[RMDB]
RNA sequence: GGGAACGACUCGAGUAGAGUCGAAAAUAGCAUGCCAAGCGCUGCUUGUAAAACAGCAACAAAAAUAACUGUAAACAACGCAGAUUACGCUCCAGCUUACGCUAAAGCUGCGUGAGUUAAUCUCCUUUUGGAGCUGGACUGAUUAGAAUUUCUAGCGACAGUAAAGAAAGUUCGCUUUCUUUACUGUAAAAGAAACAACAACAACAAC
Reactivity to DMS in 0.01 (KOAc 150mM, MgCl2 10mM, bicine 150mM(pH8.5), 24C), signal-to-noise 4, nucleotides 027 to 156: u010a110g000c040a090u000g020c030c030a130a230g010c040g020c010u000g020c000u000u000g030u000a060a100a150a300c010a030g040c030a060a300c050a030a100a080a130a180u010a050a050c020u010g010u000a100a160a040c020a030a030c040g030c010a050g010a110u010u000a040c110g020c020u000c000c020a130g010c010u000u000a020c050g010c020u000a100a110a150g030c190u000g020c000g020u000g010a030g010u010u010a020a020u000c010u010c030c050u000u000u000u000g020g000a050g020c030u000g010g010a100c070u020g000a110u010u000a070g000a130a080u000u000u010c010u000a110g030c060g000
Reactivity to 2A3 in 0.01 (KOAc 150mM, MgCl2 10mM, bicine 150mM(pH8.5), 24C), signal-to-noise 7, nucleotides 027 to 156: u130a020g040c080a050u140g020c040c030a090a030g030c040g000c040u020g000c000u020u020g050u050a060a110a030a010c000a010g070c030a020a060c050a130a210a060a050a030u200a110a030c000u020g030u060a080a070a040c020a020a010c090g000c020a010g010a050u100u090a040c050g000c030u010c000c000a000g000c000u000u010a000c000g000c010u080a180a140a140g120c190u080g000c030g000u010g010a000g000u010u040a060a080u070c050u080c030c000u100u150u110u230g010g000a000g000c010u020g000g020a030c010u030g030a110u100u150a050g070a180a160u060u040u050c050u040a020g020c020g070